RNA sequence: GGGAACGACUCGAGUAGAGUCGAAAACUGCCUUCAGUGGCGCAACGGUUUUCAUGACAGGUGCUCUGGGCUUCGUGGGGAGCGUCACUUUGGAGCAGCUGCUGCGCACUUGCCCUGACGUCCGCAACAGUGUAAGCAUGUUCGCAUGCUUACACUGAAAAGAAACAACAACAACAAC
Reactivity to DMS in 0.01 (KOAc 150mM, MgCl2 10mM, bicine 150mM(pH8.5), 24C), signal-to-noise 3, nucleotides 027 to 126: c040u000g000c050c030u000u010c140a040g020u020g020g010c030g010c060a080a090c080g000g000u000u000u000u010c070a070u000g020a090c110a070g000g020u000g020c040u000c020u010g010g010g000c060u000u010c050g030u000g010g000g010g010a130g020c020g000u000c030a010c100u000u010u000g020g030a060g010c030a040g020c060u000g010c050u000g000c080g030c060a050c070u030u000g000c010c030c020u010g000a090c120g000u000c040c030g020c130a120a110
Reactivity to 2A3 in 0.01 (KOAc 150mM, MgCl2 10mM, bicine 150mM(pH8.5), 24C), signal-to-noise 3, nucleotides 027 to 126: c020u040g030c020c010u130u110c070a100g040u060g120g010c030g000c030a050a040c040g050g020u020u070u120u170c070a040u170g060a050c020a060g140g040u060g050c000u000c000u090g050g050g010c030u060u060c050g050u110g000g090g000g020a070g030c030g050u060c030a030c000u080u090u120g060g020a070g010c020a010g040c020u060g000c020u040g040c030g000c020a030c050u010u070g030c000c000c020u010g020a030c020g050u010c000c000g080c040a040a070
Annotation:
Chemical mapping of a 177-nucleotide RNA with DMS and 2A3. DMS adducts were read by reverse transcription with MarathonRT. For 2A3, 3,928 sequencing reads were counted. For DMS, 3,969 sequencing reads were counted.